[RMDB]
Structure probing data (2A3 and DMS) for a 177-nucleotide construct. Reactivities are given for positions 27 through 126.
RNA sequence: GGGAACGACUCGAGUAGAGUCGAAAAGAUAUGGACGACAGUGAGGUGUGAACUACCUUCACACUCGGAAACGAGUGGAAGGCACACCGAGUCGUCCUAAGUCAAAAGCAUACGUUCGCGUAUGCAAGGGCAUGAGAAUGUUCGCAUUCUCAUGCCCAAAAGAAACAACAACAACAAC
Reactivity to 2A3 in 0.01 (KOAc 150mM, MgCl2 10mM, bicine 150mM(pH8.5), 24C), signal-to-noise 1, nucleotides 027 to 126: g000a000u150a060u160g000g000a000c040g000a000c060a080g270u120g300a160g050g000u010g010u020g070a110a160c030u150a110c300c000u000u030c260a300c000a000c300u010c040g000g050a040a050a020c000g020a020g000u010g000g000a000a000g000g000c020a000c020a000c040c000g000a000g020u000c000g000u000c000c000u000a000a010g020u000c020a000a260a000a000g000c000a000u020a020c010g080u100u080c300g000c010g170u020a000u000g010c020a020a020
Reactivity to DMS in 0.01 (KOAc 150mM, MgCl2 10mM, bicine 150mM(pH8.5), 24C), signal-to-noise 1, nucleotides 027 to 126: g020a130u040a300u000g030g000a040c000g000a010c030a130g040u000g060a140g000g000u000g000u000g020a100a020c030u000a300c000c010u000u010c000a300c000a000c000u000c000g000g000a070a130a110c020g020a000g000u000g000g040a000a000g000g050c020a020c000a020c000c000g000a110g000u000c010g010u000c000c000u000a000a000g020u050c060a060a080a150a260g000c020a030u000a010c000g090u000u000c200g020c010g050u000a020u000g080c000a060a070
The RNA was probed in 150 mM KOAc, 10 mM MgCl2 and 150 mM bicine (pH 8.5) at 24 C.